[RMDB]
The data come from the RNA Mapping Database (RMDB), library OK2TST. Structure probing data (2A3 and DMS) for a 177-nucleotide construct. Conditions: 150 mM KOAc, 10 mM MgCl2 and 150 mM bicine (pH 8.5), 24 C.
RNA sequence: GGGAACGACUCGAGUAGAGUCGAAAAACGGCACGCCCGCCACCGAGCCAAGGUGCUUCUCGGUGAAAGACUUGCUGGCCACGAUGAGUGCGGCCGCACCGUCGGAGGUGGCGCAGAUGUCAAGCAGUCUCCUGGAGAAGUUCGCUUCUCCAGGAGAAAAAGAAACAACAACAACAAC
Reactivity to 2A3 in 0.01 (KOAc 150mM, MgCl2 10mM, bicine 150mM(pH8.5), 24C), signal-to-noise 1, nucleotides 027 to 126: a000c010g040g000c010a000c000g030c000c100c040g000c000c000a000c000c000g020a050g040c040c020a120a060g090g060u040g130c050u070u050c040u030c120g170g000u080g050a060a050a030g060a010c020u070u080g030c090u120g040g000c030c000a050c020g060a070u190g060a030g090u110g000c000g070g050c050c080g040c010a010c050c000g040u040c040g030g040a090g020g050u030g020g000c030g000c040a030g050a130u060g010u060c090a070a020g080c020a010g160
Reactivity to DMS in 0.01 (KOAc 150mM, MgCl2 10mM, bicine 150mM(pH8.5), 24C), signal-to-noise 2, nucleotides 027 to 126: a080c190g000g000c000a080c050g030c080c130c030g000c100c000a050c000c000g000a130g040c100c040a140a160g010g010u000g010c120u010u000c000u000c130g000g030u030g000a070a240a170g030a040c050u000u000g010c060u000g000g000c000c080a170c000g000a070u020g000a230g040u000g010c030g000g000c100c120g030c010a000c040c040g000u010c020g000g020a300g040g020u000g000g020c020g020c020a060g010a170u010g050u000c010a090a180g000c150a150g000
2A3 is a SHAPE reagent: it acylates the 2'-hydroxyl of flexible nucleotides of all four kinds.